Source: RMDB library OK2TRN, as collected in RNAgym. Structure probing data (DMS and 2A3) for a 177-nucleotide construct. The reactions ran in a buffer of 150 mM KOAc, 10 mM MgCl2 and 150 mM bicine (pH 8.5), at 24 C. DMS adducts were read by reverse transcription with MarathonRT.

[RMDB]
RNA sequence: GGGAACGACUCGAGUAGAGUCGAAAAAAGGAAGACACACUGUUUGGGAGGCCCUCCGAUCCUGGAAAGGACAUCUCUCGUGACCUGGUGGCAGCUGUGCUUGUCGAGGCUGUGACUCAGCCUGGAGGCAACGUUGGGAAUUCGUUCCCAACGUUGCAAAAGAAACAACAACAACAAC
Reactivity to DMS in 0.01 (KOAc 150mM, MgCl2 10mM, bicine 150mM(pH8.5), 24C), signal-to-noise 2, nucleotides 027 to 126: a030a080g020g000a100a040g020a130c100a060c090a060c060u000g020u000u010u000g020g020g000a070g010g000c050c010c040u010c020c020g000a060u000c010c050u010g000g010a020a080a050g020g010a050c090a100u010c030u000c060u010c050g020u000g020a060c050c030u030g010g040u010g020g010c010a040g000c100u010g000u000g000c060u000u000g000u000c050g000a080g000g020c020u000g000u020g020a160c170u000c020a020g010c010c020u000g010g000a120g000
Reactivity to 2A3 in 0.01 (KOAc 150mM, MgCl2 10mM, bicine 150mM(pH8.5), 24C), signal-to-noise 1, nucleotides 027 to 126: a020a000g120g000a040a020g080a010c020a000c010a000c030u050g050u210u110u110g050g010g020a020g000g010c010c010c010u080c010c010g020a060u030c040c020u070g060g060a130a100a020g070g020a030c060a220u080c030u000c000u020c030g040u060g020a120c120c000u050g000g120u060g040g050c000a020g020c020u050g040u050g060c040u050u130g070u060c040g010a030g030g000c020u010g010u050g060a070c010u000c180a000g000c040c010u030g020g040a020g030